[RMDB]
RNA sequence: GGGAACGACUCGAGUAGAGUCGAAAAUAAUGGUGAUACAAACAUGGUGCGCAGCCAGAUCAGUGAAGAAAUUGCCAUUGCGAUCACCAUCAGAAUUGCGCCGGCAAAGAUCCACAUGGCGAGGUGGAGUAUACCUUUGGUUCGCCAAAGGUAUACUAAAAGAAACAACAACAACAAC
Reactivity to DMS in 0.01 (KOAc 150mM, MgCl2 10mM, bicine 150mM(pH8.5), 24C), signal-to-noise 6, nucleotides 027 to 126: u000a090a050u000g010g020u000g000a040u010a050c080a070a100a130c200a050u000g020g020u000g000c110g020c060a110g010c030c040a050g000a100u010c090a110g010u000g010a100a110g000a040a070a090u010u000g010c030c010a070u000u000g020c130g010a050u000c020a020c020c010a030u000c100a080g000a130a100u010u000g020c060g030c040c070g000g020c090a030a050a090g010a100u010c010c020a030c030a040u000g000g000c040g010a070g000g010u000g000g000
Reactivity to 2A3 in 0.01 (KOAc 150mM, MgCl2 10mM, bicine 150mM(pH8.5), 24C), signal-to-noise 4, nucleotides 027 to 126: u250a000a040u010g000g010u010g030a020u090a140c040a010a150a010c060a100u070g020g010u030g020c080g030c060a020g020c030c000a000g030a060u120c040a040g070u050g220a120a080g030a080a150a070u110u080g000c020c000a020u020u080g020c060g010a010u020c000a010c050c000a010u050c030a020g210a140a040u100u120g010c030g000c020c010g080g000c030a070a020a050g040a070u000c010c000a000c000a040u060g040g000c030g020a040g010g020u010g000g020
This 177-nucleotide RNA was probed chemically with DMS and 2A3.
The DMS profile rests on 6,440 reads.
The RNA was probed in 150 mM KOAc, 10 mM MgCl2 and 150 mM bicine (pH 8.5) at 24 C.
For DMS the reverse transcriptase was MarathonRT.
It was measured as part of the RMDB library OK2TRN.